[RMDB]
RNA sequence: GGGAACGACUCGAGUAGAGUCGAAAAGACGUGGAGGUUGCGCGCCCUCCUUUGCGCGUAAGUACGUCGAAAUUCGGUGCUUGGGAUCGCACCGUUAGAUCCAUUUGAUAUCCGCUUAGUGCCGCGGUUGGGCAUUUACACUUACCCGAAAGGGGAACCUAUGGGUGGAUUUCGAUCCACCCAUAGGAAAAGAAACAACAACAACAAC
Reactivity to DMS in 0.01 (KOAc 150mM, MgCl2 10mM, bicine 150mM(pH8.5), 24C), signal-to-noise 2, nucleotides 027 to 156: g020a030c040g050u000g020g020a090g020g020u000u010g000c000g020c040g050c000c120c090u000c070c070u000u030u020g020c010g030c030g050u000a010a080g010u010a040c040g010u000c010g000a040a000a160u000u000c000g070g030u000g050c050u000u000g000g020g020a240u010c160g010c010a120c020c010g040u000u030a050g020a110u000c020c010a280u010u010u020g000a130u010a140u000c000c000g010c030u000u010a080g010u000g000c050c050g020c030g000g010u000u020g000g010g010c020a110u000u010u000a150c100a070c080u000u000a190c000c020c030g030a070a100a220g000g000g020g030a080a100
Reactivity to 2A3 in 0.01 (KOAc 150mM, MgCl2 10mM, bicine 150mM(pH8.5), 24C), signal-to-noise 3, nucleotides 027 to 156: g020a000c010g000u040g050g090a110g080g140u050u030g000c010g000c000g000c000c010c010u190c020c040u100u110u090g000c010g000c000g010u000a030a020g130u040a010c000g010u010c020g010a030a030a040u090u070c000g000g000u020g000c000u060u100g110g060g040a100u110c100g000c000a010c000c000g000u000u020a030g000a040u010c010c000a060u080u050u200g110a090u060a090u120c030c000g000c060u030u110a030g020u020g060c010c000g040c080g050g030u120u050g050g000g030c010a020u070u070u100a080c080a010c020u100u120a050c010c000c000g020a080a010a010g020g000g000g000a010a060